[RMDB]
RNA sequence: GGGAACGACUCGAGUAGAGUCGAAAAUACAGAACACGUCUCCGAGUCUUAAGCCUAAAAGGAUGGACCUCAUGGCUGACGGGCCGGCAGGGUUUCGCUGGAAACGGCGGAGCCUCCCUUUCGGAAACGCGAUUAUUGAUUUCGAUCAAUAAUCGCGAAAAGAAACAACAACAACAAC
Reactivity to DMS in 0.01 (KOAc 150mM, MgCl2 10mM, bicine 150mM(pH8.5), 24C), signal-to-noise 2, nucleotides 027 to 126: u050a160c090a070g000a090a070c130a080c090g000u000c000u000c000c010g000a080g000u000c010u000u000a090a000g030c000c000u000a040a040a130a000g000g000a300u020g040g010a170c020c010u000c000a110u010g000g000c010u000g000a220c300g000g000g000c010c000g000g020c080a020g020g010g000u020u010u000c000g000c000u040g010g020a030a040a040c000g040g000c020g010g000a000g000c000c000u010c030c010c020u000u000u020c040g000g000a100a090a130
Reactivity to 2A3 in 0.01 (KOAc 150mM, MgCl2 10mM, bicine 150mM(pH8.5), 24C), signal-to-noise 3, nucleotides 027 to 126: u170a010c040a000g160a200a060c100a010c090g120u050c030u000c010c020g020a030g030u000c020u080u050a030a000g010c010c000u000a000a020a030a000g040g030a060u240g120g190a230c020c000u010c000a000u030g000g040c000u000g000a000c000g040g000g000c010c010g030g060c050a070g040g000g000u000u010u000c000g000c020u010g000g000a020a030a030c000g000g000c000g010g000a000g000c000c000u060c020c010c000u020u110u020c060g030g000a130a100a030
The record gives the reactivity of an RNA of 177 nucleotides to DMS and 2A3. It was measured as part of the RMDB libraries RFM100 and RFMREP. The 2A3 profile rests on 1,877 reads. 2A3 adducts were read by reverse transcription with SuperScript II with manganese. Reactivities are given for positions 27 through 126.